[RMDB]
RNA sequence: GGGAACGACUCGAGUAGAGUCGAAAAAACUGGCCAAAAAAGGACGGUGGGGAGUGCCCAGCGGCCGACAGGAGUAAUUCCCGCCGAAACAGGGUUUUCACCCUUCCUUUCUUCGGGUGUCCUUCCUGCUAUUAUACUUGUUCGCAAGUAUAAUAGCAAAAGAAACAACAACAACAAC
Reactivity to DMS in 0.01 (KOAc 150mM, MgCl2 10mM, bicine 150mM(pH8.5), 24C), signal-to-noise 1, nucleotides 027 to 126: a050a030c060u000g010g000c040c010a000a060a090a040a080a050g000g020a060c050g010g010u000g010g000g010g010a050g020u000g000c000c010c020a080g030c090g030g020c060c020g020a060c110a050g000g010a050g010u010a040a090u000u000c000c000c000g020c040c010g000a040a040a040c230a020g010g000g010u000u010u010u020c180a090c010c010c000u000u000c000c000u000u000u000c040u000u000c040g000g000g010u010g010u010c030c030u010u000c050c010u000
Reactivity to 2A3 in 0.01 (KOAc 150mM, MgCl2 10mM, bicine 150mM(pH8.5), 24C), signal-to-noise 2, nucleotides 027 to 126: a000a010c080u110g080g030c020c010a000a100a000a040a010a050g020g000a050c020g020g030u050g010g000g000g000a080g050u110g030c010c010c000a030g070c060g060g040c080c030g020a030c050a050g010g060a110g030u070a020a030u060u000c000c000c000g000c000c010g000a050a040a030c170a030g030g020g000u070u060u250u300c090a060c010c000c020u030u020c010c000u030u030u050c020u010u030c050g080g000g030u080g030u030c000c030u040u020c000c010u000
The record gives the reactivity of an RNA of 177 nucleotides to DMS and 2A3. The 2A3 profile rests on 3,004 reads. The RNA was probed in 150 mM KOAc, 10 mM MgCl2 and 150 mM bicine (pH 8.5) at 24 C.